[RMDB]
RNA sequence: GGGAACGACUCGAGUAGAGUCGAAAAAGGGAACUGGUCGUGGUCUCUACAGUGCGCCUUUCACGGGAUACUUCUUAGACCUGGUGGACUGCCUCAUGCUUAGUUGUCUGACCUGUGACCAGGGGUCACCGAUACCAGAGUUCGCUCUGGUAUCGGUAAAAGAAACAACAACAACAAC
Reactivity to 2A3 in 0.01 (KOAc 150mM, MgCl2 10mM, bicine 150mM(pH8.5), 24C), signal-to-noise 3, nucleotides 027 to 126: a000g100g020g020a070a070c020u010g020g020u020c010g090u070g030g040u020c020u000c020u060a030c070a090g010u030g080c070g040c020c000u040u090u120c080a050c030g000g040g010a050u130a220c030u090u150c020u090u150a070g040a140c000c000u050g130g020u030g040g040a030c020u040g030c000c040u020c030a080u130g030c050u130u130a040g020u040u130g080u050c060u030g010a020c000c000u040g070u110g040a010c010c010a010g000g000g000g000u020c010
Reactivity to DMS in 0.01 (KOAc 150mM, MgCl2 10mM, bicine 150mM(pH8.5), 24C), signal-to-noise 6, nucleotides 027 to 126: a060g010g010g010a180a120c030u000g010g000u000c020g020u000g010g010u000c020u000c050u000a110c080a040g010u000g010c270g000c020c020u000u000u010c100a070c120g010g000g000a110u010a050c130u000u000c130u010u000a080g000a090c050c010u000g030g030u000g010g000a050c040u000g010c040c040u010c080a070u010g010c120u000u010a110g010u000u000g000u010c090u000g000a030c000c010u000g010u010g010a020c010c010a040g000g000g010g000u000c060